[RMDB]
RNA sequence: GGGAACGACUCGAGUAGAGUCGAAAACGUGCUUUCGAGCACGGGGAUCGAUAUGGAGGUCUGGAGCGUUCCCACCUGAAUCUACAUUCGGAAACGAAUGUAGUGAGUGGGACGCGAUGAAAGACCUCCUAAGUCAAAUGGCGGCCUUCGGGCCGAAUUUUACACUGUCAUUCGUGACAGUGUAAAAAAAAGAAACAACAACAACAAC
Reactivity to DMS in 0.01 (KOAc 150mM, MgCl2 10mM, bicine 150mM(pH8.5), 24C), signal-to-noise 2, nucleotides 027 to 156: c020g000u000g010c000u000u010u010c250g020a050g020c000a010c010g000g000g030g020a150u000c060g000a100u000a300u000g020g020a050g050g030u000c000u000g010g010a250g010c040g010u000u000c000c000c000a020c020c020u000g030a110a090u000c000u010a020c030a010u000u010c010g010g020a150a120a220c000g020a040a010u000g030u000a000g010u000g000a030g010u000g000g010g000a060c010g010c000g000a080u000g000a140a100a080g000a000c000c010u000c030c010u020a000a060g020u000c060a100a130a150u000g000g010c000g040g000c020c000u000u000c260g050g070g000c000c000g020a010a010
Reactivity to 2A3 in 0.01 (KOAc 150mM, MgCl2 10mM, bicine 150mM(pH8.5), 24C), signal-to-noise 1, nucleotides 027 to 156: c020g000u000g020c000u150u040u110c300g120a040g000c010a020c030g000g010g000g040a300u300c120g040a070u050a080u220g000g000a020g000g000u000c000u000g040g000a050g020c000g070u280u300c030c000c020a020c000c010u040g110a060a090u060c000u000a010c000a000u000u000c020g000g040a030a050a020c030g010a000a000u000g000u000a000g000u000g010a020g010u000g000g000g000a010c000g000c000g000a070u040g030a000a040a000g000a000c000c000u020c000c000u000a000a000g000u000c030a030a070a120u180g120g010c030g060g010c020c020u050u080c230g050g030g000c020c000g010a000a000
Structure probing data (DMS and 2A3) for a 207-nucleotide construct.
The DMS profile rests on 5,072 reads.
For 2A3, 960 sequencing reads were counted.
The RNA was probed in 150 mM KOAc, 10 mM MgCl2 and 150 mM bicine (pH 8.5) at 24 C.